Chemical mapping of a 177-nucleotide RNA with DMS and 2A3. It was measured as part of the RMDB library TTRDES.
RNA sequence: GGGAACGACUCGAGUAGAGUCGAAAAGAUAUGGAUCGAUGAAGCACAUCGAUCUGGAGCUCGGAAACGAGCUUCCAGGGAGUGUCAUCGAUCCUAAGUCAAACAUAUGGCGUUCGCGCCAUAUGAACUAUACAAAGUUGUUCGCAACUUUGUAUAGAAAAGAAACAACAACAACAAC
Reactivity to DMS in 0.01 (KOAc 150mM, MgCl2 10mM, bicine 150mM(pH8.5), 24C), signal-to-noise 9, nucleotides 027 to 126: g010a010u000a010u010g000g000a000u000c000g010a010u000g010a090a220g020c020a010c010a300u000c230g000a010u010c000u000g000g000a020g010c010u000c010g020g000a010a000a010c000g010a010g000c000u010u010c000c000a010g000g000g000a020g030u000g020u000c000a010u000c000g000a010u000c000c000u000a000a060g000u000c000a160a160a300c020a010u000a000u000g000g010c010g030u000u010c270g020c010g020c000c000a010u000a000u000g000a090a200
Reactivity to 2A3 in 0.01 (KOAc 150mM, MgCl2 10mM, bicine 150mM(pH8.5), 24C), signal-to-noise 4, nucleotides 027 to 126: g000a010u020a000u060g000g000a000u000c010g010a000u010g070a110a160g300c030a010c010a040u300c090g010a010u000c000u000g000g000a010g000c000u000c000g000g010a000a010a000c000g000a000g000c000u040u020c010c000a000g000g000g000a050g000u010g030u040c000a000u000c000g000a000u000c000c000u000a000a000g000u000c020a100a090a080c010a000u010a000u000g010g000c020g050u070u110c300g010c000g000c110c010a000u000a000u000g000a010a020
The reactions ran in a buffer of 150 mM KOAc, 10 mM MgCl2 and 150 mM bicine (pH 8.5), at 24 C.